The record gives the reactivity of an RNA of 177 nucleotides to 2A3 and DMS. For 2A3 the reverse transcriptase was SuperScript II with manganese. For DMS the reverse transcriptase was MarathonRT. Conditions: 150 mM KOAc, 10 mM MgCl2 and 150 mM bicine (pH 8.5), 24 C.
RNA sequence: GGGAACGACUCGAGUAGAGUCGAAAAGGAGUGGAGUGUGCGGCUUAAUUUGACUCAACGCGGGACAGCUUACCAGGCCCGACGGCCGGACGAGUGUUGUACACGAUAGGUCGAAGAGUGGUGCAUGGAUAAUGGAGACUUUCGAGUCUCCAUUAUCAAAAGAAACAACAACAACAAC
Reactivity to 2A3 in 0.01 (KOAc 150mM, MgCl2 10mM, bicine 150mM(pH8.5), 24C), signal-to-noise 9, nucleotides 027 to 126: g070g020a060g040u110g010g030a070g040u090g010u070g030c030g020g010c020u040u090a070a040u130u070u100g040a030c010u010c070a050a040c070g000c020g030g000g040a040c020a020g000c010u020u030a060c020c020a050g020g020c000c010c010g090a070c030g000g000c000c000g000g020a050c060g030a040g010u040g020u080u120g030u080a030c030a000c030g030a040u090a080g020g010u020c010g030a070a010g030a020g070u060g010g040u050g030c040a050u100g090
Reactivity to DMS in 0.01 (KOAc 150mM, MgCl2 10mM, bicine 150mM(pH8.5), 24C), signal-to-noise 8, nucleotides 027 to 126: g000g010a130g060u010g000g010a100g030u010g030u010g010c070g000g000c040u010u010a060a090u020u010u010g010a080c050u010c060a100a120c090g020c020g000g010g000a070c090a110g020c060u000u010a120c060c030a100g010g010c010c010c060g030a110c110g000g010c010c010g000g010a060c110g010a070g000u000g020u010u010g010u010a150c050a050c050g000a050u010a110g010g000u000c020g000a050a070g000a180g020u000g000g010u000g010c060a070u020g000